[RMDB]
RNA sequence: GGGAACGACUCGAGUAGAGUCGAAAAGAACUCACCUUUGUAGAAACCUUGGCCACUAAAUUUUCGCUAUUAAUAUCCACAAAGGGUAAUAAUGGUGUGCUAUUCGCCUCACAAAUCAGCUGCAAAAACCCAUUUACCCGUUCGCGGGUAAAUGGGUAAAAGAAACAACAACAACAAC
Reactivity to 2A3 in 0.01 (KOAc 150mM, MgCl2 10mM, bicine 150mM(pH8.5), 24C), signal-to-noise 2, nucleotides 027 to 126: g030a060a000c010u010c010a040c000c010u080u130u040g060u030a070g090a080a090a150c000c020u000u040g020g000c000c050a040c050u090a000a000a300u060u020u070u100c060g000c000u000a000u000u000a000a070u000a000u070c000c000a070c210a260a090a030g020g000g000u000a000a030u000a090a000u020g120g000u030g020u030g070c000u060a070u090u040c050g010c000c000u000c020a000c030a040a110a070u040c050a030g030c000u040g020c070a030a020a010a000
The data come from the RNA Mapping Database (RMDB), library OK1LIB. The record gives the reactivity of an RNA of 177 nucleotides to 2A3. The RNA was probed in 150 mM KOAc, 10 mM MgCl2 and 150 mM bicine (pH 8.5) at 24 C.